[RMDB]
RNA sequence: GGGAACGACUCGAGUAGAGUCGAAAACACGCCACCGGCGCCUCGGCUGGUGCUCAGCAAACGACGCUGUCGCAGCUGAUCGCCGCCAUACCGUCUGUACUGCAAGGACUUUCGUCAUCGACUGCAGUCUGCAUCACGUCUUCGGACGUGAUGCAGAAAAAGAAACAACAACAACAAC
Reactivity to DMS in 0.01 (KOAc 150mM, MgCl2 10mM, bicine 150mM(pH8.5), 24C), signal-to-noise 2, nucleotides 027 to 126: c140a100c120g020c030c040a080c200c050g030g000c020g030c110c130u000c180g010g020c010u080g050g020u000g020c120u000c000a030g000c010a100a050a300c060g000a060c100g040c090u010g000u000c010g090c090a150g040c000u000g000a030u020c040g030c000c050g000c000c010a130u020a060c220c050g010u010c040u000g010u000a080c030u000g010c000a060a090g000g000a060c030u000u010u010c090g010u000c060a090u000c020g000a170c100u000g020c030a040g000
Reactivity to 2A3 in 0.01 (KOAc 150mM, MgCl2 10mM, bicine 150mM(pH8.5), 24C), signal-to-noise 2, nucleotides 027 to 126: c010a000c000g060c010c000a150c090c000g000g000c010g030c020c020u130c070g040g000c040u080g040g000u000g010c000u000c000a010g000c020a150a220a170c060g070a010c020g100c300u290g060u030c000g030c070a020g000c000u020g010a010u000c000g010c000c030g000c000c000a030u050a030c010c000g080u000c050u060g020u010a030c000u020g050c040a100a090g100g000a080c000u170u170u090c270g060u020c010a090u120c050g070a030c070u040g000c010a020g000
An RNA of 177 nucleotides, treated with DMS and 2A3 and read out base by base. Values cover nucleotides 27 to 126. Conditions: 150 mM KOAc, 10 mM MgCl2 and 150 mM bicine (pH 8.5), 24 C. It was measured as part of the RMDB library OK2TST. DMS adducts were read by reverse transcription with MarathonRT.